[RMDB]
RNA sequence: GGGAACGACUCGAGUAGAGUCGAAAAUGUAUCCUACAAGUCUAGUACAACGUAUAAACUGACUGUAGGUGACAUCUUCGUACUUACCUCUCACUCUGUGGCUACCUUGACGGCGCCCACAAUUGUGGUGUAAAUCUACGUUCGCGUAGAUUUACACAAAAGAAACAACAACAACAAC
Reactivity to 2A3 in 0.01 (KOAc 150mM, MgCl2 10mM, bicine 150mM(pH8.5), 24C), signal-to-noise 4, nucleotides 027 to 126: u010g000u000a020u050c000c000u000a000c010a080a130g010u010c030u230a000g010u060a060c060a200a050c260g150u150a080u100a210a150a010c010u010g000a000c000u000g000u010a000g010g000u020g020a010c000a010u000c010u050u020c020g040u070a030c010u010u070a030c010c010u020c000u010c030a030c010u040c060u090g020u020g030g000c010u040a060c020c000u020u040g050a030c050g010g050c060g030c010c060c000a020c020a040a140u150u100g090u080g110
Reactivity to DMS in 0.01 (KOAc 150mM, MgCl2 10mM, bicine 150mM(pH8.5), 24C), signal-to-noise 3, nucleotides 027 to 126: u000g000u000a080u000c000c000u000a010c010a030a130g000u010c000u020a050g010u010a130c170a120a160c280g010u000a140u000a060a130a070c040u000g000a040c000u010g000u000a000g000g010u010g020a080c020a000u000c040u000u000c020g000u000a050c080u020u000a080c160c040u010c040u020c050a040c060u000c070u010g000u000g010g010c030u010a060c030c000u000u000g000a060c150g030g000c190g000c200c000c010a060c090a020a080u000u010g000u000g000
Structure probing data (2A3 and DMS) for a 177-nucleotide construct. DMS (dimethyl sulfate) methylates the pairing face of unpaired adenines and cytosines. Values are in units of 0.01, from 0 to 300, in steps of 10. The data come from the RNA Mapping Database (RMDB), library 15KREP. The 2A3 profile rests on 5,444 reads. The RNA was probed in 150 mM KOAc, 10 mM MgCl2 and 150 mM bicine (pH 8.5) at 24 C.